[RMDB]
RNA sequence: GGGAACGACUCGAGUAGAGUCGAAAACAGGACGAACGCUGGCGGCGUGCCUAAUACAUGCAAGUUGAGCGAUGAAGAUUGGUGCUUGCACCAAUUUGAAGAGCAGCGAACGGGUGAGUAACGCGUGGGGAAUCUGCCUUUGAGCGGGGGACAACAUACUAAUAUACAACUUCGGUUGUAUAUUAGUAAAAGAAACAACAACAACAAC
Reactivity to DMS in 0.01 (KOAc 150mM, MgCl2 10mM, bicine 150mM(pH8.5), 24C), signal-to-noise 2, nucleotides 027 to 156: c050a110g020g000a090c050g000a080a080c040g040c030u010g020g010c020g040g040c020g050u000g000c010c020u000a120a160u000a060c040a040u000g010c030a110a110g000u000u000g010a070g040c020g000a090u000g010a180a040g000a040u000u000g020g010u010g020c050u000u000g010c010a010c000c010a020a020u000u010u000g010a100a080g000a080g000c020a070g000c000g010a050a090c030g000g010g010u000g010a120g010u010a090a060c080g000c060g040u010g030g000g020g010a040a070u000c030u010g020c020c030u010u000u010g000a090g020c040g010g020g010g000g010a080c030a040a100c090a180u000
Reactivity to 2A3 in 0.01 (KOAc 150mM, MgCl2 10mM, bicine 150mM(pH8.5), 24C), signal-to-noise 4, nucleotides 027 to 156: c040a000g030g030a020c020g050a150a050c040g040c040u030g030g030c050g020g000c020g040u060g010c000c020u100a100a060u150a120c050a050u120g030c060a090a040g050u060u160g040a040g040c040g020a050u040g050a060a050g030a030u000u000g000g000u020g020c060u110u130g000c030a010c000c000a020a010u050u040u070g060a080a030g020a010g000c030a000g000c000g030a040a020c020g050g010g010u050g020a080g020u070a080a040c050g020c050g040u060g000g010g010g010a020a080u030c030u060g030c040c000u060u040u100g040a040g020c050g000g000g000g000g000a010c030a070a000c020a060u060
This 207-nucleotide RNA was probed chemically with DMS and 2A3.